Chemical mapping of a 177-nucleotide RNA with 2A3.
Values cover nucleotides 27 to 126.
It was measured as part of the RMDB library OK1LIB.
2A3 adducts were read by reverse transcription with SuperScript II with manganese.
The RNA was probed in 150 mM KOAc, 10 mM MgCl2 and 150 mM bicine (pH 8.5) at 24 C.
RNA sequence: GGGAACGACUCGAGUAGAGUCGAAAACACAGUGCACCAAGAGCCGGUGAAAUUUCAGAGUAUCGAUGACAUCCAAGACCUUCUUGAAGAGCGUGAAAUGGUCAUCGACUUUGAGAUCUCAGCGGACAGGCACACCGUAGUUCGCUACGGUGUGCCUAAAAGAAACAACAACAACAAC
Reactivity to 2A3 in 0.01 (KOAc 150mM, MgCl2 10mM, bicine 150mM(pH8.5), 24C), signal-to-noise 2, nucleotides 027 to 126: c000a000c040a110g100u150g140c000a010c070c000a060a040g050a140g110c000c000g130g110u050g010a020a000a000u000u000u010c030a010g000a000g000u100a210u110c000g000a000u000g000a000c000a000u000c000c000a170a000g100a160c030c000u070u020c000u180u220g050a220a170g060a100g020c150g100u170g060a020a170a240u080g040g050u020c030a000u000c000g000a000c000u050u000u010g010a010g000a000u000c000u000c000a040g050c000g000g060a020c000